[RMDB]
RNA sequence: GGGAACGACUCGAGUAGAGUCGAAAAGAUGUUCCAGGUGGGUUCACAUCCCCAACCCGCGGGCCGGCUACUCUUCUUUCCCUUCUCUCGUCUUCCUCGGUCAACCUCCGGAGUUCCUCUUCCUCCUCACACUGUAAGUUCGCUUACAGUAAAAGAAACAACAACAACAAC
Reactivity to DMS in 0.01 (KOAc 150mM, MgCl2 10mM, bicine 150mM(pH8.5), 24C), signal-to-noise 9, nucleotides 027 to 129: g010a090u050g010u020u020c030c010a110g000g050u030g020g020g010u020u030c130a080c120a170u030c010c010c010c050a100a090c030c020c020g020c040g020g020g000c040c030g010g020c040u010a050c030u020c030u020u000c020u000u010u030c010c010c020u000u030c020u010c020u010c050g010u020c040u010u020c050c030u000c020g010g020u040c060a080a130c070c020u000c010c030g000g000a100g000u010u000c000c000u010c050u000u000c020c020u020c020c020u020c060a080c150
Reactivity to 2A3 in 0.01 (KOAc 150mM, MgCl2 10mM, bicine 150mM(pH8.5), 24C), signal-to-noise 9, nucleotides 027 to 129: g060a060u130g020u080u040c020c010a010g060g090u090g050g050g010u100u110c090a040c010a210u090c020c000c000c010a030a060c000c000c000g020c020g010g020g010c020c010g020g000c010u060a050c020u030c000u100u030c010u030u050u040c000c010c010u060u020c040u000c010u010c020g070u000c010u070u030c020c020u020c020g020g010u050c040a070a060c020c010u010c010c010g020g000a040g020u020u010c000c000u010c000u030u010c000c000u000c000c000u040c000a050c000